[RMDB]
RNA sequence: GGGAACGACUCGAGUAGAGUCGAAAACGUGCUCUCUUCGGAGAGCACGAAAGAAAGCACAAAGCACCAAAUAAAGGAGGUGCAGGGUGCAACCUCCAAUAAAAAGAAGUAGGUUCGCCUACUUCAACUUUUACCAAGAGUUCGCUCUUGGUAAAAGAAAAGAAACAACAACAACAAC
Reactivity to 2A3 in 0.01 (KOAc 150mM, MgCl2 10mM, bicine 150mM(pH8.5), 24C), signal-to-noise 3, nucleotides 027 to 126: c010g000u000g010c000u000c000u000c010u010u090c170g060g000a010g010a000g000c000a000c000g000a000a000a000g020a010a020a000g000c000a010c030a040a110a010g010c000a020c020c010a060a120a090u300a120a170a050g100g050a070g000g000u030g000c010a000g020g060g020u020g000c010a020a060c000c000u050c010c030a060a060u180a130a110a020a000a010g000a000a000g000u000a000g010g050u030u030c190g070c030c000u000a000c000u000u010c010a000a010
Reactivity to DMS in 0.01 (KOAc 150mM, MgCl2 10mM, bicine 150mM(pH8.5), 24C), signal-to-noise 3, nucleotides 027 to 126: c020g020u000g000c000u020c000u020c010u000u010c170g020g000a020g000a020g010c010a000c000g000a010a070a050g000a150a080a130g010c010a050c020a070a090a130g020c010a040c000c000a060a100a140u010a040a110a090g040g020a270g020g010u000g040c000a030g000g030g000u000g000c040a110a160c070c050u010c040c030a080a080u000a030a040a060a170a130g000a010a010g020u000a000g000g010u000u010c240g020c000c000u010a000c020u000u010c000a030a050
Background:
Structure probing data (2A3 and DMS) for a 177-nucleotide construct. For DMS the reverse transcriptase was MarathonRT. For 2A3, 4,582 sequencing reads were counted. The RNA was probed in 150 mM KOAc, 10 mM MgCl2 and 150 mM bicine (pH 8.5) at 24 C.